[RMDB]
RNA sequence: GGGAACGACUCGAGUAGAGUCGAAAAAGAUCCUUCGGGAUCUCGGCAUGCGUACUACAGGACUUUUGACGAAACCGACCUCCCCACCUCCCAAAUAGGAGAGGGUCGUUCAGUUUCGAUAAGUCCUGUAUCGCUUCAAGACCCAUUCGUGGGUCAACACACAAUGUUACUUCGGUAACAUUGUGUGAAAAGAAACAACAACAACAAC
Reactivity to 2A3 in 0.01 (KOAc 150mM, MgCl2 10mM, bicine 150mM(pH8.5), 24C), signal-to-noise 3, nucleotides 027 to 156: a000g020a000u000c020c010u040u070c220g110g000g010a020u010c020u020c050g110g040c170a160u210g000c010g050u080a070c050u030a000c020a000g000g000a010c020u030u050u180u130g220a170c040g000a000a000a000c020c020g010a000c000c010u030c030c000c000c010a140c040c000u020c020c040c000a110a300a120u270a120g000g000a000g010a020g000g000g010u010c000g030u060u160c060a050g000u000u000u000c000g020a030u020a060a000g010u000c010c000u000g000u000a000u020c000g000c000u050u020c030a060a050g000a000c000c000c010a020u060u130c260g110u070g010g000g000u060c020a070a000
Reactivity to DMS in 0.01 (KOAc 150mM, MgCl2 10mM, bicine 150mM(pH8.5), 24C), signal-to-noise 2, nucleotides 027 to 156: a020g010a000u000c000c010u000u000c300g060g030g010a000u020c000u000c040g030g020c120a110u000g010c000g040u010a050c080u020a040c000a050g010g010a020c000u000u000u000u000g030a300c140g030a020a000a020c000c000g000a030c010c000u000c010c010c000c030a240c240c030u000c010c010c030a050a090a190u000a050g020g010a050g030a090g000g030g000u000c010g010u000u000c030a080g010u000u000u000c000g020a120u000a020a020g000u000c010c000u000g020u000a000u000c020g000c000u000u000c030a080a160g010a050c000c010c000a120u000u000c240g020u000g030g010g000u010c000a040a280
About this RNA:
The record gives the reactivity of an RNA of 207 nucleotides to 2A3 and DMS. It was measured as part of the RMDB library RNAMAK. For 2A3 the reverse transcriptase was SuperScript II with manganese. DMS adducts were read by reverse transcription with MarathonRT.